This 177-nucleotide RNA was probed chemically with 2A3.
2A3 adducts were read by reverse transcription with SuperScript II with manganese.
[RMDB]
RNA sequence: GGGAACGACUCGAGUAGAGUCGAAAAGUGUCCUGGCCUAUGUUUGUGCUCCCCUGUGCUCAGCUGUGACAGGGUAGUCUGGCAGGACGUACAGCAGUUUCCCUCUCAGUUUAGGAGGGCUGUCCUAACCCCUGGCAGAUUUCGAUCUGCCAGGGGUAAAAGAAACAACAACAACAAC
Reactivity to 2A3 in 0.01 (KOAc 150mM, MgCl2 10mM, bicine 150mM(pH8.5), 24C), signal-to-noise 3, nucleotides 027 to 126: g120u090g000u020c000c020u060g170g130c030c010u200a140u230g150u090u190u100g180u110g030c010u030c000c000c000c000u000g030u040g070c030u040c050a220g000c080u250g140u100g100a000c000a000g010g000g010u000a000g000u010c050u010g010g050c000a000g000g000a000c000g000u060a010c010a020g000c000a020g000u010u100u070c000c090c000u030c000u000c000a260g030u060u080u240a040g020g000a000g010g000g000c010u010g040u010c000c000u040a050